RNA sequence: GGGAACGACUCGAGUAGAGUCGAAAAGGAUGUGAGUUCUCAAGCGUAAUUUUGCCUUGAGUCGCCUUACGAAUAUGUGCGAUUACAUUACGUGAUUUAAUGGGAUAAUUACGAAUAAGAUCAGCAACGGCGUAGUAUACUUCGGUAUACUACGCCGAAAAGAAACAACAACAACAAC
Reactivity to 2A3 in 0.01 (KOAc 150mM, MgCl2 10mM, bicine 150mM(pH8.5), 24C), signal-to-noise 2, nucleotides 027 to 126: g120g060a070u190g010u030g080a130g000u110u000c020u000c010a010a030g040c040g000u040a160a000u030u120u110u120g050c000c000u000u010g010a000g000u000c010g090c010c020u070u070a030c050g140a080a050u150a020u150g060u040g080c010g100a060u030u100a030c030a040u040u040a060c020g040u050g010a030u020u000u160a060a130u180g100g000g070a030u040a110a010u060u000a000c030g040a040a010u070a070a000g030a030u050c040a040g000c020a020a110
Reactivity to DMS in 0.01 (KOAc 150mM, MgCl2 10mM, bicine 150mM(pH8.5), 24C), signal-to-noise 2, nucleotides 027 to 126: g010g000a120u000g000u000g010a160g010u010u000c040u000c050a070a130g010c060g020u000a020a050u000u010u000u000g010c020c010u010u000g000a020g020u000c020g030c070c100u000u020a120c110g010a120a100u030a060u000g000u000g040c110g020a070u020u000a030c110a060u000u010a060c110g010u020g000a020u000u000u000a060a110u040g020g010g000a040u010a000a000u000u000a000c000g010a050a050u000a100a170g000a060u000c040a170g000c000a090a090
Annotation
Chemical mapping of a 177-nucleotide RNA with 2A3 and DMS. For 2A3, 1,156 sequencing reads were counted. For DMS the reverse transcriptase was MarathonRT. The data come from the RNA Mapping Database (RMDB), library OK2TST.